[RMDB]
RNA sequence: GGGAACGACUCGAGUAGAGUCGAAAAGAUGGCUCGUCCAGGUCGGGUGAGUCACCCGCGAUGGUCUCUGGCGGUGCCAGGGCACCCCAUCGGUACGGGUUUCGGGUUGCCCGUCCUAAGGGGUGUGGCGCCUAGGAUCGUUCGCGAUCUUAGGCGCAAAAGAAACAACAACAACAAC
Reactivity to DMS in 0.01 (KOAc 150mM, MgCl2 10mM, bicine 150mM(pH8.5), 24C), signal-to-noise 2, nucleotides 027 to 126: g030a210u010g000g000c000u000c000g020u000c010c000a130g000g020u040c070g000g000g000u010g000a010g030u010c020a020c010c020c010g010c120g020a060u020g000g000u010c010u010c010u010g010g010c040g000g030u070g000c000c010a050g030g000g000c010a010c000c000c000c000a030u010c260g000g000u080a010c020g020g000g000u000u010u020c090g000g000g020u020u000g010c030c000c020g000u000c010c000u010a220a100g000g000g000g000u010g010u030g000
Reactivity to 2A3 in 0.01 (KOAc 150mM, MgCl2 10mM, bicine 150mM(pH8.5), 24C), signal-to-noise 1, nucleotides 027 to 126: g060a060u060g000g000c000u000c000g010u020c000c010a020g020g070u100c020g000g000g010u000g010a040g120u040c030a010c010c000c000g000c050g000a080u040g050g080u000c000u000c000u020g010g000c040g050g060u100g010c010c000a010g000g020g000c010a010c000c000c000c000a000u030c000g000g000u090a010c000g000g000g000u000u020u060c020g010g020g000u020u060g000c010c000c000g010u000c000c000u000a050a030g010g000g020g000u000g000u000g010
An RNA of 177 nucleotides, treated with DMS and 2A3 and read out base by base. Conditions: 150 mM KOAc, 10 mM MgCl2 and 150 mM bicine (pH 8.5), 24 C. It was measured as part of the RMDB library OK1LIB.